RNA sequence: GGGAACGACUCGAGUAGAGUCGAAAAGUAAUAGAUAUGUGGAUGACGAGAAAGGGUGCGCUGAUAUCCACGACGAAGGCUAGCAGUAAAAAGAAUAGCGCUCCUUAUACAACUAGCCACAAAAGGAUAAGGUAUCGUGAUGUCAAUCACAUUGCGAAUGGAUAGUCAGUUUCGACUGACUAUCCAUAAAAGAAACAACAACAACAAC
Reactivity to 2A3 in 0.01 (KOAc 150mM, MgCl2 10mM, bicine 150mM(pH8.5), 24C), signal-to-noise 2, nucleotides 027 to 156: g060u050a020a090u080a130g060a040u080a080u180g030u010g030g010a040u040g040a070c050g000a020g060a160a090a020g070g020g000u050g010c010g000c010u010g040a020u030a040u070c030c030a020c100g030a030c060g070a120a030g010g000c030u060a000g000c080a010g070u140a000a030a050a010a000g060a070a130u030a060g040c010g030c000u020c010c010u000u030a150u010a020c010a030a050c000u000a000g000c000c000a010c050a030a060a030a010g020g000a050u070a050a080g090g010u090a050u060c010g010u010g010a000u030g000u030c060a020a070u070c040a020c000a000u000u070g010c060g010a030
Reactivity to DMS in 0.01 (KOAc 150mM, MgCl2 10mM, bicine 150mM(pH8.5), 24C), signal-to-noise 2, nucleotides 027 to 156: g050u010a120a160u000a090g060a090u010a030u000g010u000g030g030a090u000g000a140c070g020a180g000a150a110a080g000g000g040u000g010c030g030c000u010g000a130u010a040u000c000c070a070c090g010a030c080g020a100a120g000g010c000u010a030g010c050a140g020u040a000a160a030a090a030g000a020a080u010a080g020c040g080c040u000c010c010u000u010a120u040a040c020a030a180c020u000a020g000c000c050a120c040a070a040a100a080g010g020a080u000a040a100g020g040u020a130u000c040g080u000g000a050u010g000u000c020a040a110u000c100a050c000a070u010u000g040c000g000a040